[RMDB]
RNA sequence: GGGAACGACUCGAGUAGAGUCGAAAAAGUCCCCAUCCCACGGCAACUGUGGAUGGGACUGGCUUUCUGCGCUCUUCAGAUCUCUGAAAAGAGUUGGUGCAUUCGCACUAAAUCUUUGUAUUGCGACGUCGUCGUGUAUUUUCGAAUACACGACGACAAAAGAAACAACAACAACAAC
Reactivity to DMS in 0.01 (KOAc 150mM, MgCl2 10mM, bicine 150mM(pH8.5), 24C), signal-to-noise 4, nucleotides 027 to 126: a020g010u000c020c010c000c010a020u000c070c000c010a030c240g010g000c280a080a130c170u020g020u030g020g000a020u000g020g000g010a020c030u010g000g000c090u000u000u000c010u000g000c050g010c030u000c020u020u000c010a040g000a100u020c090u000c000u030g020a100a020a010a000g010a010g010u000u010g000g030u000g000c030a190u020u030c230g000c000a000c000u000a030a040a050u010c070u010u010u010g000u020a120u010u020g010c050g000a120c190
Reactivity to 2A3 in 0.01 (KOAc 150mM, MgCl2 10mM, bicine 150mM(pH8.5), 24C), signal-to-noise 6, nucleotides 027 to 126: a000g000u020c000c010c000c000a000u050c010c020c020a010c020g110g010c090a210a070c130u140g050u090g030g000a000u010g000g000g000a020c070u090g000g000c000u010u040u000c020u030g020c030g000c010u000c000u060u010c000a020g010a120u030c030u010c010u200g070a020a020a010a000g010a010g010u050u090g010g000u010g000c030a150u150u260c200g000c000a020c000u040a030a050a110u030c030u010u070u050g080u100a090u020u220g050c060g030a060c080